RNA sequence: GGGAACGACUCGAGUAGAGUCGAAAAGGUUGCGGAAGAGUCGAAUUUGGUCGUGCAGCUCCGGCUUCACGUACAUGCGUGGCCGGCCCCACGGCAGCCGCUUGAACGGCUUCGCCGCCCCAGACUCGAUCGUACGGAUGUUCGCAUCCGUACGAUCAAAAGAAACAACAACAACAAC
Reactivity to 2A3 in 0.01 (KOAc 150mM, MgCl2 10mM, bicine 150mM(pH8.5), 24C), signal-to-noise 4, nucleotides 027 to 126: g030g000u040u030g020c010g080g030a070a010g050a080g090u080c090g050a090a080u150u080u150g040g000u110c090g050u060g020c010a000g000c020u010c010c000g000g000c000u200u220c030a000c000g060u200a180c130a240u300g000c010g000u010g000g000c010c000g000g000c000c010c000c000a010c000g010g000c010a020g000c010c010g080c060u140u290g040a100a040c000g000g000c000u070u090c120g000c000c000g020c000c010c000c010a010g010a050c000u030c070
Reactivity to DMS in 0.01 (KOAc 150mM, MgCl2 10mM, bicine 150mM(pH8.5), 24C), signal-to-noise 1, nucleotides 027 to 126: g020g020u030u030g020c000g000g020a050a070g000a090g000u000c000g000a150a040u020u020u000g030g000u000c010g020u020g010c100a020g000c090u000c000c000g030g000c000u000u090c010a020c020g030u010a090c220a030u030g050c000g020u000g010g090c000c000g020g020c300c110c050c110a060c000g010g000c000a070g000c000c000g000c090u010u090g010a090a230c010g000g000c000u010u000c290g000c000c000g020c020c000c060c000a140g000a030c020u000c120